Structure probing data (DMS and 2A3) for a 177-nucleotide construct. The data come from the RNA Mapping Database (RMDB), library OK1LIB. DMS adducts were read by reverse transcription with MarathonRT. 2A3 adducts were read by reverse transcription with SuperScript II with manganese. For DMS, 3,826 sequencing reads were counted. The 2A3 profile rests on 901 reads.
RNA sequence: GGGAACGACUCGAGUAGAGUCGAAAAACCUGGCAGAUUUCAGGGUGAGGUAUCCAGCUUUAGUCCUCCUACAAUACGUAGAUGACCUCUUACUGGCUGCGGCAACCAAGACCGAAUGCCUAGAAGGUAAGCCCAUAAUCUUCGGAUUAUGGGCUUAAAAAGAAACAACAACAACAAC
Reactivity to DMS in 0.01 (KOAc 150mM, MgCl2 10mM, bicine 150mM(pH8.5), 24C), signal-to-noise 3, nucleotides 027 to 126: a060c000c000u000g020g000c020a050g010a090u000u010u020c070a090g000g020g030u010g000a210g000g000u000a080u020c010c050a090g000c060u010u040u030a140g000u000c040c040u000c040c000u010a050c050a110a090u050a080c180g040u000a050g000a040u030g000a020c020c050u000c060u030u010a080c080u000g020g010c020u000g000c060g040g000c050a060a070c100c080a070a100g010a100c050c030g000a100a060u020g010c000c010u000a060g020a100a140g010g020
Reactivity to 2A3 in 0.01 (KOAc 150mM, MgCl2 10mM, bicine 150mM(pH8.5), 24C), signal-to-noise 2, nucleotides 027 to 126: a000c000c000u000g000g000c080a030g040a160u000u140u110c010a020g070g010g010u050g010a000g000g060u020a060u040c000c080a060g000c120u010u040u120a040g010u020c000c040u060c030c010u000a030c000a200a150u230a180c150g030u030a020g020a070u090g000a040c000c000u030c000u030u070a140c120u020g000g010c000u030g000c030g050g000c000a000a110c050c060a000a110g040a090c010c000g050a060a180u070g010c000c000u070a000g060a010a010g070g000